[RMDB]
RNA sequence: GGGAACGACUCGAGUAGAGUCGAAAAGUAUGUUACGAUUAUGUGACUAGCCAUAAUCGAUGAAGGUACUCGACUUCAUCGUAACAUAGAAUUGUCAGUGCGUACUGGCUAGUCACAGUACGGCAGACUACACUCCUAGUCUGCCACUGACUAGGAGCGAUUGUAGCUAGUUCGCUAGCUACAAUCGAAAAGAAACAACAACAACAAC
Reactivity to 2A3 in 0.01 (KOAc 150mM, MgCl2 10mM, bicine 150mM(pH8.5), 24C), signal-to-noise 7, nucleotides 027 to 156: g050u030a030u090g040u060u120a060c050g020a200u150u130a070u160g010u000g000a000c000u000a000g000c000c010a080u120a130a080u110c010g000a000u010g010a010a010g040g010u110a070c060u050c090g100a040c010u010u000c000a000u010c000g010u020a010a010c020a050u130a090g210a170a170u190u140g060u110c080a060g140u060g190c060g020u080a070c040u020g000g010c000u000a000g000u000c000a000c000a000g000u000a010c000g020g020c010a010g010a050c020u040a020c060a020c030u010c000c000u000a000g000u010c020u070g180c030c010a020c020u000g000a000c000u000a010g000g010a000g010
Reactivity to DMS in 0.01 (KOAc 150mM, MgCl2 10mM, bicine 150mM(pH8.5), 24C), signal-to-noise 3, nucleotides 027 to 156: g030u000a030u000g020u000u010a050c020g020a160u010u000a090u020g000u010g000a040c020u000a050g010c080c010a070u000a100a120u000c010g020a040u000g000a060a020g010g020u000a100c190u010c110g010a110c000u000u000c010a050u000c010g010u020a040a070c040a090u000a120g010a050a240u000u010g040u020c070a190g000u000g010c070g000u010a090c190u000g020g000c010u020a010g020u000c000a040c000a030g010u000a030c050g020g010c000a060g010a070c030u000a110c120a160c040u010c060c010u000a020g010u000c000u000g000c060c020a000c060u000g020a040c010u000a030g000g020a060g010
Chemical mapping of a 207-nucleotide RNA with 2A3 and DMS.
The reactions ran in a buffer of 150 mM KOAc, 10 mM MgCl2 and 150 mM bicine (pH 8.5), at 24 C.
2A3 adducts were read by reverse transcription with SuperScript II with manganese.